[RMDB]
RNA sequence: GGGAACGACUCGAGUAGAGUCGAAAAAAGUGAGUGUCAGUUUGUUAGUCAUGGCAGAUGGGGGCUCCCUCCUGGUGCUGAAGCAUGGUGAGGUUGCUGGCAGGAAGGGGCUUUGGGACAGAGAUGGAAGUAGCACUUGAGUGGGGAGCAGGGAAAACAAAAUUACGUCAUUCGUGACGUAAUUUUGAAAAGAAACAACAACAACAAC
Reactivity to DMS in 0.01 (KOAc 150mM, MgCl2 10mM, bicine 150mM(pH8.5), 24C), signal-to-noise 1, nucleotides 027 to 156: a020a040g000u000g000a100g030u000g000u000c020a080g000u000u000u000g010u010u000a100g020u000c090a100u000g030g000c010a070g010a050u000g020g010g020g040g000c020u000c000c000c020u000c020c020u010g000g020u020g010c010u010g010a050a090g030c060a090u000g010g020u000g010a110g010g040u010u010g020c030u000g000g020c060a090g000g000a120a070g010g010g030g010c000u000u000u010g020g020g040a130c140a060g000a120g010a070u010g020g000a070a160g030u000a060g020c040a010c050u010u020g010a190g020u010g040g010g020g010a040g000c070a060g000g020g000a070a040a090a160
Reactivity to 2A3 in 0.01 (KOAc 150mM, MgCl2 10mM, bicine 150mM(pH8.5), 24C), signal-to-noise 4, nucleotides 027 to 156: a020a000g110u090g030a040g010u040g030u040c030a030g020u020u090u070g040u060u090a050g040u080c040a060u060g050g020c040a020g040a140u070g000g000g000g030g000c020u010c000c000c000u020c000c010u040g030g030u040g050c040u070g050a050a020g030c020a040u080g030g050u080g070a060g010g020u040u060g000c060u030g020g030c040a020g000g030a020a040g020g000g000g000c000u060u050u050g020g000g020a030c020a040g050a010g010a030u070g050g000a060a020g020u060a010g000c010a010c030u050u070g060a060g060u120g020g020g000g010a010g010c010a020g010g020g030a010a090a030a030
About this RNA: Structure probing data (DMS and 2A3) for a 207-nucleotide construct. Conditions: 150 mM KOAc, 10 mM MgCl2 and 150 mM bicine (pH 8.5), 24 C.